[RMDB]
RNA sequence: GGGAACGACUCGAGUAGAGUCGAAAACGCUGGGUGAUCGAGCUCCCUCAUCGAUCGUCUGAAGCGCGCACGGACGGGAGAGGGAUUGCUCGAGUCACCUGUGCUGAAGCGCGCACGGCAACCGAAAGGUGCGAAAACCCGUGGUUCGCCACGGGAACUACACUUAAAUGUUCGCAUUUAAGUGUAGAAAAGAAACAACAACAACAAC
Reactivity to DMS in 0.01 (KOAc 150mM, MgCl2 10mM, bicine 150mM(pH8.5), 24C), signal-to-noise 2, nucleotides 027 to 156: c060g020c030u010g010g030g020u000g010a220u000c020g030a050g020c020u000c020c000c010u000c010a220u010c140g020a080u010c000g060u000c000u030g010a060a010g000c020g070c000g010c010a300c030g000g010a020c000g020g000g010a150g000a030g000g010g000a060u000u000g040c030u000c000g020a040g030u010c000a070c010c000u000g010u000g020c000u000g010a100a060g020c010g010c020g010c010a300c000g010g010c000a120a120c030c020g000a080a150a160g010g000u000g000c010g000a130a090a060a140c010c010c000g050u000g000g020u000u000c300g050c010c000a030c020g030g020g010a040a020
Reactivity to 2A3 in 0.01 (KOAc 150mM, MgCl2 10mM, bicine 150mM(pH8.5), 24C), signal-to-noise 7, nucleotides 027 to 156: c020g000c010u030g000g000g000u010g010a040u030c000g000a000g000c010u010c020c030c020u010c030a300u180c090g230a120u140c010g000u000c000u000g100a250a050g010c010g000c000g000c010a010c000g020g000a000c020g060g120g020a050g000a000g020g000g000a030u080u300g010c000u000c000g000a000g010u000c000a000c000c000u000g010u010g000c010u040g020a160a040g000c000g000c000g000c000a010c020g030g000c010a030a020c010c000g040a070a030a020g010g000u020g000c020g000a080a030a040a080c010c000c000g010u010g000g030u060u090c250g040c070c010a000c000g000g000g010a000a010
This 207-nucleotide RNA was probed chemically with DMS and 2A3. 2A3 adducts were read by reverse transcription with SuperScript II with manganese. Conditions: 150 mM KOAc, 10 mM MgCl2 and 150 mM bicine (pH 8.5), 24 C. The 2A3 profile rests on 12,615 reads. The DMS profile rests on 4,423 reads.